Conditions: 150 mM KOAc, 10 mM MgCl2 and 150 mM bicine (pH 8.5), 24 C.
This 177-nucleotide RNA was probed chemically with DMS and 2A3.
DMS adducts were read by reverse transcription with MarathonRT.
The DMS profile rests on 847 reads.
The 2A3 profile rests on 1,119 reads.
Values cover nucleotides 27 to 126.
2A3 adducts were read by reverse transcription with SuperScript II with manganese.
In probing experiments dimethyl sulfate is read out at A N1 and C N3, which are open when not base-paired.
RNA sequence: GGGAACGACUCGAGUAGAGUCGAAAACGAGUCGGCGAUCGAGUUGGACGUUCGGGCCGCGCCGUCGGCGCGCGGGCACCAGCGUGACAUCGACGAAAUCUUCGCGAUGCUACGUGCCCACAUCGCGGGGCUUAUGAGUGUUCGCACUCAUAAGCCCAAAAGAAACAACAACAACAAC
Reactivity to DMS in 0.01 (KOAc 150mM, MgCl2 10mM, bicine 150mM(pH8.5), 24C), signal-to-noise 1, nucleotides 027 to 126: c130g000a120g010u000c010g010g040c000g000a080u010c020g030a080g000u000u000g010g020a060c000g010u000u000c180g030g000g040c070c020g000c040g000c030c030g000u020c130g000g010c130g040c010g030c060g000g010g000c020a130c000c060a120g000c000g000u010g030a070c060a090u000c010g000a080c000g000a090a110a070u010c110u000u010c000g010c010g020a000u000g000c080u000a240c070g000u000g020c030c000c000a300c050a020u000c060g010c120g020
Reactivity to 2A3 in 0.01 (KOAc 150mM, MgCl2 10mM, bicine 150mM(pH8.5), 24C), signal-to-noise 2, nucleotides 027 to 126: c040g000a000g020u000c000g000g050c010g000a260u020c040g040a020g080u040u010g110g060a060c020g000u080u080c110g010g000g050c000c000g040c010g060c000c000g180u250c250g050g100c070g030c020g000c000g060g010g000c070a100c100c000a000g030c000g060u010g020a060c000a090u050c010g100a090c010g060a110a030a070u090c050u150u070c030g000c000g030a000u000g020c020u110a060c080g090u090g080c000c040c000a000c000a020u040c000g040c040g020